An RNA of 177 nucleotides, treated with DMS and 2A3 and read out base by base. Reactivities are given for positions 27 through 126. The data come from the RNA Mapping Database (RMDB), libraries RFM100 and RFMREP. 2A3 adducts were read by reverse transcription with SuperScript II with manganese.
RNA sequence: GGGAACGACUCGAGUAGAGUCGAAAAUUGUCCGAGAGGGCAUGUGCCGAGCAGCUACGCACCACGGGGUAAGAGCUGAAUGCAUCUAAGCUCGAAACCCACCUGGAAAAGAAGCACCACUGAGACCCUUUGCCUUGUAAUUCGUUACAAGGCAAAGAAAAGAAACAACAACAACAAC
Reactivity to DMS in 0.01 (KOAc 150mM, MgCl2 10mM, bicine 150mM(pH8.5), 24C), signal-to-noise 8, nucleotides 027 to 126: u020u010g020u010c010c020g020a190g010a190g000g000g010c020a030u000g020u020g010c030c030g000a100g010c050a070g000c040u000a060c080g010c070a110c040c020a050c220g010g010g010g020u000a040a290g000a010g010c000u000g000a130a140u020g010c130a050u010c050u000a220a050g000c010u000c010g000a040a060a080c020c010c000a110c060c060u010g000g000a070a040a080a090g010a140a080g010c050a080c030c020a080c070u000g000a100g000a110c080c050
Reactivity to 2A3 in 0.01 (KOAc 150mM, MgCl2 10mM, bicine 150mM(pH8.5), 24C), signal-to-noise 8, nucleotides 027 to 126: u050u030g020u020c000c010g020a030g040a030g050g020g010c030a020u060g030u060g050c010c010g010a030g000c020a010g000c020u080a050c060g010c040a040c010c010a030c040g010g000g000g000u030a040a020g010a000g000c010u020g050a110a080u150g050c020a030u040c040u110a030a010g000c000u000c000g020a100a020a020c000c000c010a030c000c010u040g010g030a080a060a030a020g080a050a000g010c020a020c000c010a020c030u060g020a020g040a080c000c000